RNA sequence: GGGAACGACUCGAGUAGAGUCGAAAAGAAGAUAUUGUCAUCAAAAUACUGUGGCAUUGGCAUAAAGCCAGAUACAGAGAUCAAUGAAAUGGAAAUCAAUGGAAUGAAGAUCAGUGGAAUGGAAUCCAUUAAUCAAUGGAUUGGAAUGGAUCAAUGGCUCCUACAACCAUUUCGAUGGUUGUAGGAGAAAAGAAACAACAACAACAAC
Reactivity to DMS in 0.01 (KOAc 150mM, MgCl2 10mM, bicine 150mM(pH8.5), 24C), signal-to-noise 1, nucleotides 027 to 156: g000a100a150g000a190u000a150u000u000g000u090c020a080u010c060a070a150a050a130u020a100c070u000g000u000g070g060c010a100u000u000g020g080c000a130u010a040a120a220g010c030c010a130g050a040u000a070c040a070g000a180g060a080u000c020a030a040u000g000a040a090a080u000g000g010a040a050a050u000c060a030a060u010g020g010a010a150u000g000a000a110g000a060u020c040a040g000u000g000g020a080a110u000g000g000a090a130u000c000c000a050u000u030a070a090u000c030a090a040u010g060g000a000u000u000g050g010a080a130u000g010g000a060u000c010a020a160u020g010g000
Reactivity to 2A3 in 0.01 (KOAc 150mM, MgCl2 10mM, bicine 150mM(pH8.5), 24C), signal-to-noise 2, nucleotides 027 to 156: g070a020a020g000a030u050a030u040u150g040u030c020a040u040c010a040a120a020a040u150a150c090u040g000u020g020g000c040a060u040u030g000g010c030a020u090a130a140a000g010c010c000a000g000a010u070a000c050a000g070a000g020a030u080c030a000a040u080g100a140a040a020u100g010g030a080a060a040u070c060a010a020u060g060g000a010a010u090g060a030a000g000a090u020c030a000g060u030g010g000a120a060u080g000g020a020a000u000c000c000a000u010u060a030a090u080c020a000a050u020g060g000a000u040u030g060g030a090a020u080g010g010a010u050c010a000a020u070g100g050
Source: RMDB library OK3TST, as collected in RNAgym. Chemical mapping of a 207-nucleotide RNA with DMS and 2A3. Conditions: 150 mM KOAc, 10 mM MgCl2 and 150 mM bicine (pH 8.5), 24 C. 2A3 adducts were read by reverse transcription with SuperScript II with manganese.